[RMDB]
RNA sequence: GGGAACGACUCGAGUAGAGUCGAAAAUAAGAAGGAACUGAGAUUGGAUAAUCCGCAGCCAAGCCCUAAGGUGUGGAAGCACUAUGGGACAGGUUCACAGACUAAGUGGAAGUGGGUGGCAUGCGUUAAGGCGUGUGCUGCUUAAGAUAUAGUCGGUUACAUUCUUAAUCUUCGGAUUAAGAAUGUAAAAAGAAACAACAACAACAAC
Reactivity to DMS in 0.01 (KOAc 150mM, MgCl2 10mM, bicine 150mM(pH8.5), 24C), signal-to-noise 2, nucleotides 027 to 156: u000a080a130g010a130a090g000g000a040a060c040u010g000a080g000a120u000u000g030g010a140u000a040a080u000c010c040g000c020a070g000c030c010a050a150g010c010c000c020u020a100a300g020g020u010g060u000g040g030a150a230g020c030a020c020u000a200u000g000g000g000a050c050a120g030g030u000u000c060a050c030a080g000a050c020u000a050a100g010u010g000g010a100a080g030u010g010g030g010u000g020g000c020a020u010g030c020g020u010u010a090a110g060g010c010g010u010g030u000g000c020u000g020c020u000u000a030a080g010a070u000a060u000a060g010u000c040g030g040u000
Reactivity to 2A3 in 0.01 (KOAc 150mM, MgCl2 10mM, bicine 150mM(pH8.5), 24C), signal-to-noise 5, nucleotides 027 to 156: u130a010a020g060a050a040g060g010a050a030c040u030g030a020g040a170u070u100g050g010a020u060a140a070u090c030c030g000c040a020g010c020c010a050a040g000c000c020c000u050a130a070g030g000u030g020u040g040g100a080a050g010c020a010c020u040a080u120g000g000g030a040c040a030g010g030u060u050c040a030c010a050g050a030c020u050a100a020g060u050g060g070a050a050g060u070g020g020g000u010g010g000c010a000u010g000c000g020u030u140a130a060g150g000c000g000u010g000u000g000c000u010g000c000u040u020a040a010g050a020u070a010u040a150g030u020c010g000g010u000
Description
Structure probing data (DMS and 2A3) for a 207-nucleotide construct. The DMS profile rests on 3,960 reads. The RNA was probed in 150 mM KOAc, 10 mM MgCl2 and 150 mM bicine (pH 8.5) at 24 C. For 2A3 the reverse transcriptase was SuperScript II with manganese. The data come from the RNA Mapping Database (RMDB), library ARCHII. For DMS the reverse transcriptase was MarathonRT.